[RMDB]
RNA sequence: GGGAACGACUCGAGUAGAGUCGAAAAUACGGUCAGCAGGGGUUUCUUUCGGCCUUCAGAUGCGUCAUAUCCUGUAGGCCGGCGGAAACUACUUGCCGACUCUAAAACGAGAGCUUCGGCUCUCGAACGUAUAAACGAGGUUCGCCUCGUUUAUACGAAAAGAAACAACAACAACAAC
Reactivity to DMS in 0.01 (KOAc 150mM, MgCl2 10mM, bicine 150mM(pH8.5), 24C), signal-to-noise 3, nucleotides 027 to 126: u000a070c290g010g010u000c010a030g030c020a020g010g000g000g000u010u000u000c010u000u010u000c020g000g010c000c000u010u000c020a010g000a120u000g010c180g000u020c290a130u010a150u010c070c010u000g000u010a010g010g030c000c000g020g040c050g000g000a020a010a010c010u000a020c010u000u000g010c020c030g010a020c010u000c050u010a030a050a100a160c010g000a010g000a020g000c000u000u010c230g010g010c000u010c000u000c000g000a020a070
Reactivity to 2A3 in 0.01 (KOAc 150mM, MgCl2 10mM, bicine 150mM(pH8.5), 24C), signal-to-noise 2, nucleotides 027 to 126: u120a020c040g000g000u000c000a000g000c000a010g000g010g020g040u000u030u000c000u020u020u000c000g000g000c000c000u010u030c010a020g020a060u080g080c020g070u060c020a020u050a040u300c040c010u030g000u010a010g000g000c010c010g010g000c010g000g010a040a010a000c000u080a100c000u000u010g010c010c000g000a010c000u030c010u050a090a090a010a010c020g000a010g000a010g010c010u040u070c280g080g000c000u020c010u000c000g000a020a000